[RMDB]
RNA sequence: GGGAACGACUCGAGUAGAGUCGAAAACGACUGCGUUUCGACGCAGUCGAACAUUAUGUGGUGAAAUAUAAAAGCCGAAAUUCCGAUACCAUAUAAUUUAAAUUACCUACGAGUUCGCUCGUAGGAAUCCUUUAUAAACUUUCGAGUUUAUAAAGGAAAAAGAAACAACAACAACAAC
Reactivity to DMS in 0.01 (KOAc 150mM, MgCl2 10mM, bicine 150mM(pH8.5), 24C), signal-to-noise 2, nucleotides 027 to 126: c010g030a010c000u010g000c020g030u000u010u020c120g020a050c000g010c000a010g000u000c000g020a030a110c060a080u000u000a000u000g020u010g000g010u010g010a130a290a050u010a100u010a050a060a080a110g010c080c030g020a030a100a140u010u000c030c020g010a110u000a040c010c000a020u010a010u000a010a010u000u010u010a050a110a110u030u010a100c000c000u000a000c010g000a020g010u000u000c240g000c000u000c000g010u000a010g000g000a040a030
Reactivity to 2A3 in 0.01 (KOAc 150mM, MgCl2 10mM, bicine 150mM(pH8.5), 24C), signal-to-noise 2, nucleotides 027 to 126: c010g020a000c000u000g010c030g000u070u020u060c180g010a000c000g000c010a000g000u020c000g000a000a000c020a020u030u010a010u040g000u020g050g000u070g090a080a150a020u230a040u110a140a190a020a040g070c060c020g050a100a100a070u170u050c060c010g070a070u020a120c000c000a010u010a010u020a100a000u080u180u210a150a210a160u120u120a180c020c010u010a000c000g000a010g000u020u120c200g100c080u000c000g000u000a000g000g000a000a000